[RMDB]
RNA sequence: GGGAACGACUCGAGUAGAGUCGAAAACACUGUCUCUAAUGAGUCAAGCGCUUCAAGUAAUACAGUUAAACCAGUUGCAAGUGCAUGGAAACGUAAUAAAUAUGGUACUUACUACAUGGAAGAAAGUACGUAAUUGUACUUUCGAGUACAAUUACGUAAAAGAAACAACAACAACAAC
Reactivity to DMS in 0.01 (KOAc 150mM, MgCl2 10mM, bicine 150mM(pH8.5), 24C), signal-to-noise 6, nucleotides 027 to 126: c110a120c080u010g000u000c020u000c010u010a090a060u010g010a100g010u010c060a070a090g020c110g020c020u010u010c100a050a070g010u010a050a060u010a040c050a050g030u010u010a040a100a060c020c010a050g010u000u010g010c060a080a110g020u020g000c040a030u010g000g010a090a080a060c110g010u010a030a060u010a050a090a090u010a090u010g010g010u010a030c030u000u000a040c020u000a040c060a050u000g010g000a060a070g010a060a060a050g010u000
Reactivity to 2A3 in 0.01 (KOAc 150mM, MgCl2 10mM, bicine 150mM(pH8.5), 24C), signal-to-noise 9, nucleotides 027 to 126: c070a010c050u080g050u020c000u000c000u050a180a150u140g020a010g030u040c060a060a040g040c030g010c080u120u110c070a040a050g020u040a070a060u080a080c060a020g010u040u090a080a080a060c020c010a040g030u050u040g060c040a100a080g050u040g110c010a030u030g020g070a100a080a030c070g030u080a030a060u080a150a190a030u200a080u140g050g010u020a020c010u020u010a010c010u010a010c010a070u070g040g010a040a040g040a050a100a020g090u010
This 177-nucleotide RNA was probed chemically with DMS and 2A3. The reactions ran in a buffer of 150 mM KOAc, 10 mM MgCl2 and 150 mM bicine (pH 8.5), at 24 C. For 2A3 the reverse transcriptase was SuperScript II with manganese. It was measured as part of the RMDB libraries RFM100 and RFMREP.